[RMDB]
RNA sequence: GGGAACGACUCGAGUAGAGUCGAAAAUUCGGUUUAGGCGUCUCCACCGGUAUCGGAUCAAGCUCGACAUUGUUAGACGCCAUGCGCGACGGGUCCAGCGACGGCGCUGCCGCAUCUCCCGCCCGCACGUCGCGUGAUCCUUCGGGAUCACGCGACGAAAAGAAACAACAACAACAAC
Reactivity to 2A3 in 0.01 (KOAc 150mM, MgCl2 10mM, bicine 150mM(pH8.5), 24C), signal-to-noise 1, nucleotides 027 to 126: u030u000c000g070g060u000u090u200a040g000g000c040g000u000c000u050c080c030a130c000c010g000g130u090a240u180c030g040g060a000u000c050a090a000g000c020u070c000g030a000c000a030u010u180g030u010u100a060g040a090c000g100c010c030a000u000g030c010g000c000g130a040c080g000g000g000u030c000c010a000g060c020g180a080c040g000g000c070g000c170u110g000c000c000g090c000a040u010c020u000c000c000c010g020c000c000c000g000c000a030

Overview: This 177-nucleotide RNA was probed chemically with 2A3. Source: RMDB library OK1LIB, as collected in RNAgym. The RNA was probed in 150 mM KOAc, 10 mM MgCl2 and 150 mM bicine (pH 8.5) at 24 C. The 2A3 profile rests on 454 reads.